The record gives the reactivity of an RNA of 207 nucleotides to DMS and 2A3.
DMS adducts were read by reverse transcription with MarathonRT.
For DMS, 1,252 sequencing reads were counted.
RNA sequence: GGGAACGACUCGAGUAGAGUCGAAAAGUUGAUCCCCUGAUCAAGGAUGCCCGAAACGGUGAGGCGGAAAGCAAAUUAAAUAACGUCAACCCAUCGGGACGGUUGGCCAGUUAAGAAGUGAGGAUUCAAAAGAUCGAACCGUUCGCGGUUCGAUCAAGUUCUUCAUUGUCUUCGGACAAUGAAGAACAAAAGAAACAACAACAACAAC
Reactivity to DMS in 0.01 (KOAc 150mM, MgCl2 10mM, bicine 150mM(pH8.5), 24C), signal-to-noise 1, nucleotides 027 to 156: g000u000u000g000a150u000c000c010c000c020u000g000a090u000c030a040a110g030g000a140u000g030c000c000c090g000a060a110a200c160g070g100u010g000a100g030g020c000g060g020a080a090a070g040c080a100a040a260u000u000a050a120a090u020a110a170c020g000u010c000a090a020c000c010c070a240u000c030g010g000g020a140c070g050g000u000u000g010g010c000c030a040g000u000u000a110a080g000a020a080g000u000g100a140g020g070a110u000u010c110a130a070a090a090g000a040u030c000g040a000a040c000c010g000u000u000c300g010c030g030g000u010u000c000g000a000u000c000a010a010
Reactivity to 2A3 in 0.01 (KOAc 150mM, MgCl2 10mM, bicine 150mM(pH8.5), 24C), signal-to-noise 1, nucleotides 027 to 156: g070u030u070g060a150u060c010c000c000c030u020g030a040u010c010a030a000g100g020a050u140g020c000c000c050g050a080a110a040c110g000g060u040g010a100g020g000c010g010g040a100a050a030g150c170a100a070a090u230u200a120a060a060u150a110a000c010g010u000c000a000a010c020c000c020a010u020c010g000g000g030a010c000g050g010u020u010g020g000c020c010a040g040u080u120a100a030g090a100a030g050u080g040a040g110g000a100u070u110c040a000a050a050a100g010a000u000c000g000a000a000c000c000g000u040u010c180g000c010g070g000u010u000c000g000a010u000c000a000a000
The RNA was probed in 150 mM KOAc, 10 mM MgCl2 and 150 mM bicine (pH 8.5) at 24 C. For 2A3 the reverse transcriptase was SuperScript II with manganese.